[RMDB]
RNA sequence: GGGAACGACUCGAGUAGAGUCGAAAACAGGUGUCGUCCUGUUUGUUAGCCCUGCGCGGUUUCGUCCGUGUAGUGAUGGAGGGUGUGCCUGACCCACCUAAGCUUAAAAGUAUGGUGGUUACCACUUGUGCCCUACAGAAUUCGUUCUGUAGGGCACAAAAGAAACAACAACAACAAC
Reactivity to 2A3 in 0.01 (KOAc 150mM, MgCl2 10mM, bicine 150mM(pH8.5), 24C), signal-to-noise 2, nucleotides 027 to 126: c000a000g000g060u150g070u150c020g070u100c040c010u000g070u090u070u080g010u070u150a070g010c000c030c000u000g000c000g000c000g030g000u050u230u160c120g100u070c040c010g010u040g000u000a010g000u000g130a090u110g000g090a000g000g010g000u000g000u020g000c000c000u030g010a030c000c000c000a050c000c000u070a130a080g000c000u110u290a110a020a000a020g030u020a050u140g010g000u030g000g000u090u010a040c030c010a010c040u000u000
Reactivity to DMS in 0.01 (KOAc 150mM, MgCl2 10mM, bicine 150mM(pH8.5), 24C), signal-to-noise 2, nucleotides 027 to 126: c020a040g000g030u050g030u040c150g000u030c010c030u000g050u000u000u000g050u000u000a160g020c050c040c000u000g000c100g000c080g000g000u000u030u040c130g000u120c000c000g040u010g020u030a010g000u010g000a040u030g000g000a180g010g000g000u010g060u000g010c040c050u000g000a150c140c000c000a050c010c000u000a060a150g000c010u020u040a110a100a100a130g000u000a170u010g010g000u010g000g000u010u010a160c080c100a080c150u020u000